Chemical mapping of a 177-nucleotide RNA with 2A3.
Conditions: 150 mM KOAc, 10 mM MgCl2 and 150 mM bicine (pH 8.5), 24 C.
High 2A3 reactivity points to a flexible backbone, as in loops and unpaired stretches.
RNA sequence: GGGAACGACUCGAGUAGAGUCGAAAAUAAACCUGCUUGCUUAACAUAUUUUCCCCUUCCCCUUGGUUCCUCAGGUACUUGAGAAAGGGGAGAAACGGGAGACCUGGGCAAACUGUUUGCCUAGUCAAGCAUAGGUGGCUUUCGAGCCACCUAUGCUAAAAGAAACAACAACAACAAC
Reactivity to 2A3 in 0.01 (KOAc 150mM, MgCl2 10mM, bicine 150mM(pH8.5), 24C), signal-to-noise 1, nucleotides 027 to 126: u190a040a040a000c000c120u000g010c040u050u000g060c030u080u130a040a000c060a100u160a130u270u130u040u090c000c020c000c060u000u190c060c000c000c030u000u040g000g090u200u270c010c000u000c010a000g000g190u150a220c150u150u020g000a000g100a000a000a000g000g000g000g000a000g000a030a030a000c070g000g000g000a240g020a010c000c020u080g000g000g000c000a000a000a090c130u110g290u300u170u030g000c000c040u060a030g170u190c060a100